[RMDB]
RNA sequence: GGGAACGACUCGAGUAGAGUCGAAAAGUCUCUCGUUCAUGCCCACUUCCCUAAGAACACGCGUAAACGGUCCUUUCACUAUUCCUUGACGCUUCCUGGACUGCAGAGACACUUAGUAUGCGGGUCACAGUGAAGGAUGAUUCGUCAUCCUUCACUGAAAAGAAACAACAACAACAAC
Reactivity to DMS in 0.01 (KOAc 150mM, MgCl2 10mM, bicine 150mM(pH8.5), 24C), signal-to-noise 7, nucleotides 027 to 126: g010u000c030u010c010u000c060g020u000u000c060a060u000g000c020c020c030a110c130u000u000c010c020c020u020a100a120g010a080a070c060a080c100g020c040g020u010a050a090a110c110g000g010u000c020c030u000u000u010c060a060c080u010a120u000u000c020c020u000u000g010a090c110g010c060u000u000c010c020u010g010g010a070c030u000g010c070a040g000a140g010a060c050a070c120u010u000a090g030u000a080u000g010c030g000g010g000u000c080a200
Reactivity to 2A3 in 0.01 (KOAc 150mM, MgCl2 10mM, bicine 150mM(pH8.5), 24C), signal-to-noise 6, nucleotides 027 to 126: g010u010c000u000c000u010c050g030u040u050c050a080u120g030c020c000c000a030c010u030u020c030c010c000u040a090a040g040a110a020c040a020c060g060c030g090u090a040a100a060c050g030g040u040c010c020u060u120u070c040a040c060u070a110u090u080c020c000u020u070g030a030c030g010c000u040u020c010c000u030g030g040a060c010u020g020c040a010g020a000g000a050c000a010c060u030u020a020g040u040a070u110g030c040g030g040g020u030c030a030

Background: The data come from the RNA Mapping Database (RMDB), library OK2TST. Structure probing data (DMS and 2A3) for a 177-nucleotide construct. For DMS the reverse transcriptase was MarathonRT. 2A3 is a SHAPE reagent: it acylates the 2'-hydroxyl of flexible nucleotides of all four kinds. Values cover nucleotides 27 to 126. The reactions ran in a buffer of 150 mM KOAc, 10 mM MgCl2 and 150 mM bicine (pH 8.5), at 24 C.